RNA sequence: GGGAACGACUCGAGUAGAGUCGAAAAGAACAGAUUGCCGCACUGGCUGCCCUGAUGAGAACAUACCCGUGACUAGCGUCGAAACAUCAACAGUGCGGGCUGUUGGUGUCGGGAGCCACUAAAAGAACACCUAUACGUGGUUCGCCACGUAUAGGUGAAAAGAAACAACAACAACAAC
Reactivity to DMS in 0.01 (KOAc 150mM, MgCl2 10mM, bicine 150mM(pH8.5), 24C), signal-to-noise 3, nucleotides 027 to 126: g000a090a200c110a030g020a090u030u000g000c010c000g020c020a070c070u000g010g000c030u030g000c040c010c020u010g010a060u000g010a110g030a090a130c080a080u020a080c150c100c030g000u020g010a080c050u000a140g000c080g010u020c050g010a090a080a060c000a010u010c010a000a030c000a020g000u020g010c060g010g010g000c020u010g000u000u010g000g000u010g000u000c060g010g010g010a080g020c080c000a100c110u020a070a040a080a140g000a130a080
Reactivity to 2A3 in 0.01 (KOAc 150mM, MgCl2 10mM, bicine 150mM(pH8.5), 24C), signal-to-noise 4, nucleotides 027 to 126: g050a080a030c030a030g040a080u040u090g040c010c000g050c010a010c010u070g010g040c020u050g100c020c000c040u030g080a070u040g020a070g030a060a000c030a060u170a080c020c000c030g050u080g060a100c070u100a060g070c000g090u070c070g110a140a000a030c010a010u010c010a000a020c000a010g000u050g090c060g010g030g000c030u000g000u050u000g020g000u020g060u050c090g030g040g010a020g030c050c040a040c030u070a060a020a010a050g040a040a010